[RMDB]
RNA sequence: GGGAACGACUCGAGUAGAGUCGAAAAGAGCGUUCGCGCUCCUCUUUGCGUACUACCGUCUUUUGACGCUCCACUCUGGGAGAAGCUCCCAAAUAGGAGCUUCGAAGAACAGAGGAGAGCGAUAAGACGGUAUCGCUUCGUGCACGUUCGCGUGCAACGCAAUGGGAAAUUUCGAUUUCCCAUUGCGAAAAGAAACAACAACAACAAC
Reactivity to 2A3 in 0.01 (KOAc 150mM, MgCl2 10mM, bicine 150mM(pH8.5), 24C), signal-to-noise 3, nucleotides 027 to 156: g000a000g020c050g000u110u100c150g040c000g080c140u030c020c030u060c030u040u080u060g000c010g020u050a120c060u000a000c050c010g010u020c030u000u140u030u110g210a110c050g000c010u000c000c000a200c000u010c000u020g010g000g000a060g000a000a000g000c000u030c000c040c040a130a290a000u270a090g000g000a000g010c000u000u000c000g010a040a010g010a020a000c020a000g000a010g010g000a070g000a000g030c000g000a010u020a020a000g000a000c000g000g000u000a040u000c000g010c000u030u080c040g070u030g000c000a000c000g000u040u090c110g040c020g080u010g060c010a020a020
Reactivity to DMS in 0.01 (KOAc 150mM, MgCl2 10mM, bicine 150mM(pH8.5), 24C), signal-to-noise 1, nucleotides 027 to 156: g010a020g000c010g100u000u000c240g000c060g050c000u010c000c020u010c060u000u010u010g020c030g020u000a130c120u010a000c010c010g030u000c020u010u010u000u000g050a180c060g030c000u000c010c030a150c050u000c010u020g020g000g010a250g020a020a050g030c000u010c010c000c060a030a180a200u000a040g010g010a040g010c040u000u010c020g050a090a140g010a180a220c000a030g000a040g000g020a080g040a030g010c000g020a110u010a000a010g020a050c030g010g000u000a000u020c050g020c010u000u000c030g020u000g010c010a030c050g000u010u000c210g090c010g030u000g000c000a020a110